[RMDB]
RNA sequence: GGGAACGACUCGAGUAGAGUCGAAAAACACUUUGUAGUCGCAACAAACAUCAUUGAAAAUGGAGUGACACUUGACGUAGACUGUGUUAUUGAUUUUGGCCUCAAAGUAGUAGCGAUGCUAGACACACCUUUACCGACCGUUCGCGGUCGGUAAAGGAAAAGAAACAACAACAACAAC
Reactivity to DMS in 0.01 (KOAc 150mM, MgCl2 10mM, bicine 150mM(pH8.5), 24C), signal-to-noise 1, nucleotides 027 to 126: a120c060a020c100u010u010u010g030u010a090g010u000c060g020c080a050a050c090a010a070a110c120a050u010c080a080u030u020g000a100a060a130a080u000g010g000a070g060u000g000a080c060a050c060u000u010g020a110c110g010u010a080g020a040c070u020g050u000g000u000u000a120u000u010g000a080u000u040u000u000g000g010c000c040u000c030a030a050a060g000u010a060g000u000a010g050c070g000a070u030g020c020u000a060g000a150c150a130c220a120
Reactivity to 2A3 in 0.01 (KOAc 150mM, MgCl2 10mM, bicine 150mM(pH8.5), 24C), signal-to-noise 1, nucleotides 027 to 126: a010c010a000c000u020u010u150g030u100a030g090u060c080g000c040a020a050c010a020a210a010c020a030u060c020a070u080u240g130a080a050a050a050u040g090g050a110g030u040g020a000c010a050c010u000u100g030a030c040g080u050a010g030a060c050u010g000u010g020u210u000a140u050u100g070a070u030u080u020u240g020g010c000c020u000c000a000a050a050g010u060a020g010u030a010g000c030g080a100u060g060c050u010a030g060a050c060a000c000a040